Notes
This 177-nucleotide RNA was probed chemically with DMS and 2A3. In probing experiments dimethyl sulfate is read out at A N1 and C N3, which are open when not base-paired. The DMS profile rests on 1,865 reads. DMS adducts were read by reverse transcription with MarathonRT. It was measured as part of the RMDB library OK1LIB.
RNA sequence: GGGAACGACUCGAGUAGAGUCGAAAAGAAGUGGCAGGGACAUGCCCCACAAGCUCGUUCUAGCAACAUAUGUUUGGCUAGUUCGAGCGAUUAGUCUCGAGGAGCGUCCUCUCGCCUCUUCACGAGAAUCAUCCCACGAUUUCGAUCGUGGGAUGAUAAAAGAAACAACAACAACAAC
Reactivity to DMS in 0.01 (KOAc 150mM, MgCl2 10mM, bicine 150mM(pH8.5), 24C), signal-to-noise 2, nucleotides 027 to 126: g000a050a080g040u020g000g010c020a140g000g000g000a050c000a210u070g010c040c030c000c020a070c200a200a270g030c020u000c000g000u000u010c000u000a000g040c000a020a050c070a190u020a090u080g010u000u010u030g000g000c050u030a010g000u020u020c000g010a000g010c000g060a000u020u050a110g000u050c150u000c190g000a180g000g000a300g020c030g000u000c000c010u000c070u110c160g020c040c000u000c010u010u000c000a090c070g000a160g000a040
Reactivity to 2A3 in 0.01 (KOAc 150mM, MgCl2 10mM, bicine 150mM(pH8.5), 24C), signal-to-noise 4, nucleotides 027 to 126: g010a000a000g010u030g020g000c040a010g010g000g010a030c050a030u290g020c010c000c010c010a060c010a060a000g010c000u000c000g000u010u000c000u000a000g020c000a010a060c030a040u300a110u300g120u130u120u100g210g030c000u000a010g000u000u000c000g010a000g010c000g000a010u000u020a050g110u030c050u060c250g060a180g020g020a150g000c000g020u000c010c000u030c000u000c050g000c000c000u020c000u000u000c000a020c070g170a160g060a040